[RMDB]
RNA sequence: GGGAACGACUCGAGUAGAGUCGAAAAAGUGCGUAAUCAGCCCUUUGAUUUUGGAACUGAAGUUAUAGAUCUCACUAUUCAUAGUCCUCCUGACUUGGAAGCUUUAAGACCUGAUAAUAGAGCUGAAAGGGGGAAUAAUUUUCGAAUUAUUCCCCCUAAAAGAAACAACAACAACAAC
Reactivity to DMS in 0.01 (KOAc 150mM, MgCl2 10mM, bicine 150mM(pH8.5), 24C), signal-to-noise 1, nucleotides 027 to 126: a110g010u010g000c090g020u010a180a090u000c100a090g000c000c020c030u000u000u000g010a100u010u010u000u000g000g010a090a070c080u020g000a020a020g000u000u000a070u010a120g020a140u010c040u020c100a090c100u010a110u010u010c050a030u020a070g000u010c010c130u010c040c070u000g000a050c070u000u000g020g000a030a060g010c040u000u010u010a050a060g000a160c020c030u000g000a010u020a080a130u010a110g010a060g010c000u000g000a040a040

The record gives the reactivity of an RNA of 177 nucleotides to DMS. Values are in units of 0.01, from 0 to 300, in steps of 10. For DMS, 848 sequencing reads were counted. Source: RMDB library OK2TST, as collected in RNAgym. DMS adducts were read by reverse transcription with MarathonRT.